[RMDB]
RNA sequence: GGGAACGACUCGAGUAGAGUCGAAAACACACGUGCUUCGGCACGUGUGAAACCUAGUCAAAAUAACGCAAGACUAGGAAAGCGUAAGUACGAAAGUAGAAAAAAGGUGAGUGUUCGCACUCACCAACUAGGCUUAUCUGUUCGCAGAUAAGCCUAGAAAAGAAACAACAACAACAAC
Reactivity to 2A3 in 0.01 (KOAc 150mM, MgCl2 10mM, bicine 150mM(pH8.5), 24C), signal-to-noise 3, nucleotides 027 to 126: c010a000c000a020c010g000u000g030c020u030u030c050g150g030c010a000c000g000u010g000u000g030a000a000a000c000c000u010a010g020u000c010a000a020a140a300u220a240a070c070g040c120a110a090g000a010c010u010a000g020g000a000a110a020g000c020g110u150a050a080g110u030a070c060g040a140a020a000g060u190a050g250a070a090a010a000a070a010g010g010u000g000a000g000u030g030u080u140c200g000c100a000c000u010c000a010c000c000a000a000
Reactivity to DMS in 0.01 (KOAc 150mM, MgCl2 10mM, bicine 150mM(pH8.5), 24C), signal-to-noise 2, nucleotides 027 to 126: c000a030c000a010c010g010u000g070c030u000u000c200g030g010c000a030c000g010u000g010u000g000a020a020a060c010c010u000a060g000u010c000a070a120a080a110u020a080a070c200g010c140a110a130g000a020c020u000a010g000g000a020a120a160g030c130g000u010a060a040g020u000a040c060g000a040a140a080g010u000a060g000a000a060a080a100a110a110g000g010u000g010a010g000u000g010u000u010c150g000c000a030c000u000c000a010c000c000a010a020